[RMDB]
RNA sequence: GGGAACGACUCGAGUAGAGUCGAAAAAAUUUUUUCGGUCUCGUCAGACAAAUCAGUGACAUGAUGGUCAUAGCGAAAGCACACGGACGAAAUGUCACUGAUGAAAAAGUGCGUGUGACCAAUUUAAUACUAGCUGGUCAUUCGUGACCAGCUAGUAAAAAGAAACAACAACAACAAC
Reactivity to DMS in 0.01 (KOAc 150mM, MgCl2 10mM, bicine 150mM(pH8.5), 24C), signal-to-noise 1, nucleotides 027 to 126: a000a050u000u000u000u000u000u000c100g060g000u000c000u000c150g050u000c100a110g010a080c080a130a140a000u000c020a010g000u000g020a030c000a020u000g000a180u000g010g000u000c000a090u000a040g010c020g000a160a030a060g080c040a100c190a070c150g000g000a010c000g010a060a140a010u000g010u000c000a010c010u010g000a000u000g000a030a030a050a000a040g030u000g030c060g000u000g000u000g000a110c010c010a070a110u000u000u000a040a070